[RMDB]
RNA sequence: GGGAACGACUCGAGUAGAGUCGAAAAGACAUUGGGGAUCACGUUACAUGAAUAAUGGUGCCUGUUACAAUUGUGGACAGCCGGGGCAUCAAGCAAGAAACUGUCCCCUACCACAGACUGACAGUCACAUCCUGAUCAGCUUCGGCUGAUCAGGAUGAAAAGAAACAACAACAACAAC
Reactivity to DMS in 0.01 (KOAc 150mM, MgCl2 10mM, bicine 150mM(pH8.5), 24C), signal-to-noise 1, nucleotides 027 to 126: g040a090c210a080u020u010g000g000g000g020a080u030c120a030c180g080u010u050a070c190a090u010g010a120a130u000a160a080u000g000g000u000g050c070c020u000g000u000u000a130c120a110a240u020u000g020u030g010g010a100c090a060g000c140c120g000g000g000g000c000a050u000c030a000a040g010c120a070a040g020a050a070a080c140u000g000u000c000c000c000c000u000a080c060c010a150c100a080g000a140c090u010g010a060c140a060g000u010c010a070
Reactivity to 2A3 in 0.01 (KOAc 150mM, MgCl2 10mM, bicine 150mM(pH8.5), 24C), signal-to-noise 2, nucleotides 027 to 126: g060a000c050a060u080u100g060g020g000g010a040u140c040a020c140g030u080u120a110c070a150u040g130a100a070u190a200a160u090g020g000u010g000c040c040u070g000u010u120a080c070a110a240u280u090g070u080g060g050a040c030a040g100c120c070g040g000g040g030c000a020u000c050a010a010g080c020a080a110g030a170a030a010c000u030g010u040c000c000c010c000u000a010c010c030a030c010a010g040a000c030u070g050a010c040a020g020u000c010a010
Chemical mapping of a 177-nucleotide RNA with DMS and 2A3. The RNA was probed in 150 mM KOAc, 10 mM MgCl2 and 150 mM bicine (pH 8.5) at 24 C. 2A3 adducts were read by reverse transcription with SuperScript II with manganese.